[RMDB]
RNA sequence: GGGAACGACUCGAGUAGAGUCGAAAAAGCUUAUUUUGAAAAAUGUUUACCAGGAUAUACACUGAUUAAUAAAUUACAUCCAUCAAUUGAAGAUUCAGACAUUGAUGACGUAUCUUCAAUCGACACGCUCUCCCAAGGUGUUCGCACCUUGGGAGAGAAAAGAAACAACAACAACAAC
Reactivity to 2A3 in 0.01 (KOAc 150mM, MgCl2 10mM, bicine 150mM(pH8.5), 24C), signal-to-noise 1, nucleotides 027 to 126: a000g240c190u300u250a160u020u110u110u280g160a070a000a000a000a000u110g000u020u000u000a000c000c000a060g010g010a000u060a060u000a100c060a000c160u000g000a180u000u180a090a000u090a110a120a090u070u030a000c040a000u040c120c060a100u060c000a010a000u000u000g030a070a000g000a000u100u040c060a000g130a070c000a000u150u270g200a130u300g110a200c000g030u020a000u000c000u000u190c000a000a000u020c000g020a020c020a000c130g000